[RMDB]
RNA sequence: GGGAACGACUCGAGUAGAGUCGAAAAACAGAAGGCUGAAAGUUCAAGCAAGCUAGCCGGCAAAAAAGCAAACUUGACCACCAAGGAUAAAAGAGAUCUUAUCCAAGGAUGCAAAAGAUAAUCUCACAAAAGCUUCAUUCGUUCGCGAAUGAAGCAACCGUAAUAUCUAGUUCGCUAGAUAUUACGGAAAAGAAACAACAACAACAAC
Reactivity to 2A3 in 0.01 (KOAc 150mM, MgCl2 10mM, bicine 150mM(pH8.5), 24C), signal-to-noise 5, nucleotides 027 to 156: a000c040a030g090a100a020g030g000c020u050g020a100a070a020g020u080u050c050a030a030g020c020a040a010g000c020u040a020g030c010c030g050g010c060a050a050a050a040a010a010g040c040a080a060a050c020u030u050g020a060c000c020a020c010c010a030a020g010g010a020u030a030a040a020a000g100a000g010a030u050c030u040u020a000u000c010c000a000a040g030g000a030u080g020c020a030a080a060a000g030a030u120a110a040u110c040u020c060a090c040a070a130a020a040g010c000u000u000c000a000u000u000c000g020u020u070c170g010c010g110a000a000u000g000a000a000g000c000a000a000
Reactivity to DMS in 0.01 (KOAc 150mM, MgCl2 10mM, bicine 150mM(pH8.5), 24C), signal-to-noise 2, nucleotides 027 to 156: a040c010a090g000a050a050g000g020c030u020g020a040a100a100g020u000u000c010a060a090g010c010a050a160g040c000u010a240g040c080c020g000g020c030a000a050a100a160a180a040g020c020a060a080a050c020u010u000g000a130c060c020a100c020c020a070a300g010g010a010u000a000a030a080a040g000a240g020a150u030c030u010u000a020u010c010c060a030a300g000g000a180u000g000c070a050a050a070a080g010a140u000a070a100u000c010u000c020a090c080a050a040a040a150g010c000u010u000c000a010u000u000c020g010u000u000c300g000c060g010a000a000u000g000a000a000g000c000a000a000